[RMDB]
RNA sequence: GGGAACGACUCGAGUAGAGUCGAAAACGCUGUAGAGGCCACUCGGGCUCGACACUGCGUUACCUCGCAGGUCACCGAUACACGGGUUUCGUGAUCGUGGUCUGUGUAGCGCCCGGACCAAUCCGGCGCACGGGGUCGGAUUCGUCCGACCCCGUGCAAAAGAAACAACAACAACAAC
Reactivity to DMS in 0.01 (KOAc 150mM, MgCl2 10mM, bicine 150mM(pH8.5), 24C), signal-to-noise 2, nucleotides 027 to 126: c000g000c000u000g000u000a010g000a130g060g010c000c000a190c190u020c230g030g000g040c010u020c000g000a130c040a050c070u000g000c000g020u000u010a140c100c050u020c010g010c000a010g000g030u000c000a020c020c050g000a030u000a100c010a000c020g000g010g010u040u010u030c020g030u000g000a090u000c040g010u000g000g000u000c000u000g050u000g020u030a080g000c060g000c050c020c050g010g000a140c220c270a090a130u020c000c010g000g030c140
Reactivity to 2A3 in 0.01 (KOAc 150mM, MgCl2 10mM, bicine 150mM(pH8.5), 24C), signal-to-noise 4, nucleotides 027 to 126: c000g000c010u010g020u020a020g020a040g080g050c000c000a140c120u250c170g070g010g020c050u050c060g000a020c030a050c090u060g000c010g000u020u040a070c010c020u010c010g010c000a000g000g010u010c000a010c040c120g030a010u210a130c010a000c030g220g050g000u160u300u300c000g010u010g000a040u050c030g010u010g000g000u000c000u000g060u000g010u000a030g030c030g020c010c080c000g020g000a020c030c060a010a120u030c010c000g000g000c000
Chemical mapping of a 177-nucleotide RNA with DMS and 2A3. The reactions ran in a buffer of 150 mM KOAc, 10 mM MgCl2 and 150 mM bicine (pH 8.5), at 24 C. DMS adducts were read by reverse transcription with MarathonRT.